[RMDB]
RNA sequence: GGGAACGACUCGAGUAGAGUCGAAAAGAUAUGGAAUUACAGCUGUAUAAUCCGACAUGACAUGAAAGACAUUCGGAAACGAAUGCUUUCAACAGCAUGCGGAUUAUACAGCUGUAAUUCCUAAGUCCAGUUGAAUCAACUUCGGUUGAUUCAACUGAAAAGAAACAACAACAACAAC
Reactivity to DMS in 0.01 (KOAc 150mM, MgCl2 10mM, bicine 150mM(pH8.5), 24C), signal-to-noise 3, nucleotides 027 to 126: g010a110u010a300u000g000g010a010a010u000u000a010c000a010g020c010u020g000u000a000u000a000a000u000c000c000g050a190c000a010u000g000a080c110a300u010g000a010a010a000g000a190c000a020u000u030c010g000g000a200a090a230c000g020a010a010u010g000c000u000u020u000c000a020a070c300a190g000c010a010u000g000c020g010g000a000u000u000a010u000a020c010a000g000c000u000g010u000a010a010u000u000c000c000u000a010a080g020u000c040